[RMDB]
RNA sequence: GGGAACGACUCGAGUAGAGUCGAAAAGUCUAGCGAAGGGAUCCCACCCGGGACACACGCAAGUCGCGAAUUAGGCCGACCGGCCAAGGUCAAUCGCAGAACUCAACUGCAUGAGUAAGCUAGACGACCAGCAUAGUAGUUUCGACUACUAUGCUGGAAAAGAAACAACAACAACAAC
Reactivity to DMS in 0.01 (KOAc 150mM, MgCl2 10mM, bicine 150mM(pH8.5), 24C), signal-to-noise 3, nucleotides 027 to 126: g010u000c000u000a000g010c000g020a130a070g030g000g010a070u000c010c000c020a300c060c010c020g020g000g000a100c140a210c050a050c070g020c070a070a080g010u000c050g000c010g010a040a090u000u000a120g040g030c010c020g010a100c220c110g010g010c030c030a050a090g020g000u000c050a070a080u000c020g000c020a080g010a080a070c120u010c210a090a120c090u000g010c030a050u000g010a140g010u000a060a190g000c010u000a010g000a030c000g000a130
Reactivity to 2A3 in 0.01 (KOAc 150mM, MgCl2 10mM, bicine 150mM(pH8.5), 24C), signal-to-noise 4, nucleotides 027 to 126: g000u000c000u000a000g000c010g120a210a200g040g000g000a020u000c000c000c000a100c020c010c010g000g030g000a060c050a010c000a000c070g030c030a040a050g070u090c030g000c010g020a120a210u100u030a180g010g000c020c040g050a130c070c080g080g070c010c000a010a040g030g030u060c030a010a030u030c040g000c040a060g060a160a070c060u050c150a090a140c050u050g000c010a040u070g020a030g110u020a000a000g000c000u000a000g010a000c000g010a030